Chemical mapping of a 177-nucleotide RNA with 2A3 and DMS. For 2A3 the reverse transcriptase was SuperScript II with manganese. The RNA was probed in 150 mM KOAc, 10 mM MgCl2 and 150 mM bicine (pH 8.5) at 24 C.
[RMDB]
RNA sequence: GGGAACGACUCGAGUAGAGUCGAAAACGAUCUGGCGCGCAGGGAAGGACGCCGUCAAUCGGGCGAAGCAGGCUAUGAGCAAGGGGAAGGAAGUGAGUUCGGAGCUCAUCCGCCAGAUGCUUUUGGCGCUAUCUUAGCUGUUCGCAGCUAAGAUAGCAAAAGAAACAACAACAACAAC
Reactivity to 2A3 in 0.01 (KOAc 150mM, MgCl2 10mM, bicine 150mM(pH8.5), 24C), signal-to-noise 2, nucleotides 027 to 126: c020g000a030u000c020u050g020g000c020g000c020g000c060a060g010g060g060a100a010g060g020a030c040g000c030c010g040u070c020a030a120u110c050g040g050g030c030g030a040a010g000c030a020g040g000c010u050a050u160g090a040g030c050a040a060g080g000g000g050a090a030g050g030a030a090g070u060g070a050g030u040u070c040g060g040a010g000c010u020c010a020u030c050c020g000c000c010a040g010a050u070g050c010u010u040u040u070g060g010c030
Reactivity to DMS in 0.01 (KOAc 150mM, MgCl2 10mM, bicine 150mM(pH8.5), 24C), signal-to-noise 2, nucleotides 027 to 126: c060g020a090u000c050u010g000g020c030g000c110g010c100a100g020g000g010a090a040g010g000a140c110g000c010c020g020u000c110a080a090u000c160g020g000g000c060g000a060a130g030c100a120g000g000c040u000a040u010g000a060g010c080a020a130g000g020g010g020a110a070g020g020a050a100g020u000g000a010g060u000u000c180g000g040a230g000c020u010c020a020u020c110c030g040c000c010a020g010a130u000g000c100u010u000u000u000g000g010c220